[RMDB]
RNA sequence: GGGAACGACUCGAGUAGAGUCGAAAAGGCUAUUUCGAUAGCCGCGUAGAUAUGGACAUAAUAAUCCACUAGAGAUCACUCUUCGGAAACGAAGAGAGAUCGAUUGGUGAAAAAAAAUCACAAUAUGUCCUAAGUCAUAAAUCCGUUUCGACGGAAAGUCGAUACGUUAAUUCGUUAACGUAUCGACAAAAGAAACAACAACAACAAC
Reactivity to 2A3 in 0.01 (KOAc 150mM, MgCl2 10mM, bicine 150mM(pH8.5), 24C), signal-to-noise 7, nucleotides 027 to 156: g000g000c000u010a010u020u220u180c240g120a040u010a010g000c020c020g000c030g090u140a050g010a040u040a020u080g010g000a000c010a000u060a070a030u070a080a070u200c080c010a020c040u080a070g030a020g000a270u000c020a010c040u000c000u000u000c000g000g030a030a000a040c000g000a000a010g000a000g000a000g000a000u000c010g020a040u040u170g000g000u040g060a050a000a000a000a000a000a010a020u230c150a100c050a110a110u050a010u060g000u000c000c000u000a030a010g010u000c010a020u120a190a140a060u050c010c000g010u060u110u110c200g090a040c010g050g000a060a050a070
Reactivity to DMS in 0.01 (KOAc 150mM, MgCl2 10mM, bicine 150mM(pH8.5), 24C), signal-to-noise 3, nucleotides 027 to 156: g030g020c000u000a000u010u000u020c150g020a050u000a000g000c000c000g000c150g030u000a090g020a090u000a160u000g010g010a020c000a020u000a080a150u000a190a260u000c010c010a040c000u000a180g000a300g020a000u000c000a140c000u010c000u000u000c000g010g000a100a080a230c010g000a030a010g030a010g010a040g000a000u000c000g010a130u000u000g000g010u000g000a000a000a000a060a080a130a160a250u040c160a150c130a090a160u000a030u000g010u020c010c000u010a050a100g000u000c050a140u000a060a070a120u000c020c000g020u000u000u000c270g020a020c000g010g010a020a060a100

Annotation:
Structure probing data (2A3 and DMS) for a 207-nucleotide construct. DMS (dimethyl sulfate) methylates the pairing face of unpaired adenines and cytosines. Values cover nucleotides 27 to 156. 2A3 adducts were read by reverse transcription with SuperScript II with manganese. As a SHAPE reagent, 2A3 marks flexible, mostly unpaired nucleotides at the ribose 2'-OH. Conditions: 150 mM KOAc, 10 mM MgCl2 and 150 mM bicine (pH 8.5), 24 C. Source: RMDB library RNAMAK, as collected in RNAgym.